Structure probing data (DMS and 2A3) for a 207-nucleotide construct. Values cover nucleotides 27 to 156. The reactions ran in a buffer of 150 mM KOAc, 10 mM MgCl2 and 150 mM bicine (pH 8.5), at 24 C. For DMS the reverse transcriptase was MarathonRT. The DMS profile rests on 10,351 reads.
RNA sequence: GGGAACGACUCGAGUAGAGUCGAAAAAGCCAUACCAUUACGAUAGUAUGGCAAGUCCGUGACGGCGAUGGAUCCCGCCUGGCCGAUGCCGAACUGCCGAUCUGGCUGAUGGUUCCUGCCCCGUCAAAAAACGUAAAGCACUUCGGUGCUUUACGAAGUAAAGUAACAUCUUCGGAUGUUACUUUACAAAAGAAACAACAACAACAAC
Reactivity to DMS in 0.01 (KOAc 150mM, MgCl2 10mM, bicine 150mM(pH8.5), 24C), signal-to-noise 3, nucleotides 027 to 156: a070g010c000c000a010u000a000c000c020a080u000u000a190c270g010a150u000a020g010u000a020u010g010g030c000a040a060g000u000c020c050g030u000g020a050c020g010g020c040g020a170u000g020g000a050u000c030c020c050g010c010c020u010g030g010c020c030g010a080u000g020c040c030g030a100a110c070u000g010c000c000g000a060u000c030u000g020g020c020u000g010a140u010g020g020u000u000c010c010u000g050c070c060c070c010g000u010c030a010a050a070a080a100a130c010g010u000a000a010a010g000c000a010c010u000u000c300g070g030u010g010c000u000u000u000a000c000g010a020a060
Reactivity to 2A3 in 0.01 (KOAc 150mM, MgCl2 10mM, bicine 150mM(pH8.5), 24C), signal-to-noise 7, nucleotides 027 to 156: a000g010c000c000a000u010a000c010c010a070u130u180a100c140g100a090u060a090g000u000a000u000g000g000c010a000a020g040u010c010c010g030u040g010a010c000g000g020c100g040a020u060g000g000a020u050c020c010c000g010c000c040u030g020g000c020c020g040a050u120g070c050c030g160a210a120c110u130g030c030c010g050a070u040c050u100g010g000c010u040g030a130u120g020g000u010u020c000c000u030g030c000c010c000c010g020u020c030a000a020a060a040a040a050c010g000u000a000a000a000g000c000a010c010u030u100c220g080g000u000g000c000u000u000u000a000c000g000a030a000